Notes: The data come from the RNA Mapping Database (RMDB), library TTRDES. The record gives the reactivity of an RNA of 177 nucleotides to DMS and 2A3. Values cover nucleotides 27 to 126. For DMS the reverse transcriptase was MarathonRT. The DMS profile rests on 1,303 reads. The reactions ran in a buffer of 150 mM KOAc, 10 mM MgCl2 and 150 mM bicine (pH 8.5), at 24 C. 2A3 adducts were read by reverse transcription with SuperScript II with manganese.
RNA sequence: GGGAACGACUCGAGUAGAGUCGAAAAAAAGAUAUGGAAGUGGGCACAUUCAACAAUAUCUUGGAUUUAGUCGUCGGAAACGACGACUUGUCAGAUAUUGCGCAUUUGUGCCACUUCCUAAGUCAAACUUGUUGAGAAACUUCGGUUUCUCAACAAGAAAAGAAACAACAACAACAAC
Reactivity to DMS in 0.01 (KOAc 150mM, MgCl2 10mM, bicine 150mM(pH8.5), 24C), signal-to-noise 1, nucleotides 027 to 126: a080a100a150g000a050u020a300u010g000g020a010a000g030u010g040g020g030c000a010c010a020u000u010c180a220a090c000a010a010u000a000u010c000u010u010g000g000a000u000u010u000a010g000u000c000g010u000c000g010g000a090a080a190c010g010a010c000g000a000c010u000u000g000u000c000a030g000a000u000a010u000u000g010c030g000c200a240u010u000u000g000u020g000c030c000a020c010u000u000c000c000u010a010a090g010u000c050a120a070a200
Reactivity to 2A3 in 0.01 (KOAc 150mM, MgCl2 10mM, bicine 150mM(pH8.5), 24C), signal-to-noise 1, nucleotides 027 to 126: a000a000a050g070a000u070a020u120g030g020a000a000g050u140g090g260g000c010a000c000a040u080u120c050a080a050c010a030a000u020a010u020c020u050u160g200g010a040u300u150u190a010g000u010c000g000u000c000g040g020a020a040a070c000g000a000c000g000a000c000u000u000g010u000c010a000g000a020u000a010u010u020g070c050g040c020a210u050u000u160g000u000g000c030c000a000c000u010u030c000c000u030a020a010g000u020c000a020a080a080